[RMDB]
RNA sequence: GGGAACGACUCGAGUAGAGUCGAAAAGAUAUGGACAACGCAACAGCUGGAGGGUCGGAAACGACCUCCCAGACAUGCGUGUCCUAAGUCAAAGUUAGAGUCAGGGCUUCGGCCCUGACUCUAACAACAAAUUUAUAAGGUUCGCCUUAUAAAUUUGAAAAGAAACAACAACAACAAC
Reactivity to DMS in 0.01 (KOAc 150mM, MgCl2 10mM, bicine 150mM(pH8.5), 24C), signal-to-noise 1, nucleotides 027 to 126: g010a050u000a290u000g000g010a030c000a070a060c000g030c000a020a050c250a180g020c010u010g010g000a060g000g010g010u020c000g030g000a050a070a140c010g000a000c000c000u010c000c000c000a000g000a130c060a220u000g000c000g030u000g000u000c000c010u000a020a080g000u000c020a060a160a130g010u000u000a000g000a030g040u000c000a000g020g010g000c000u010u000c200g030g000c000c000c010u000g020a000c000u000c000u000a000a000c000a080a220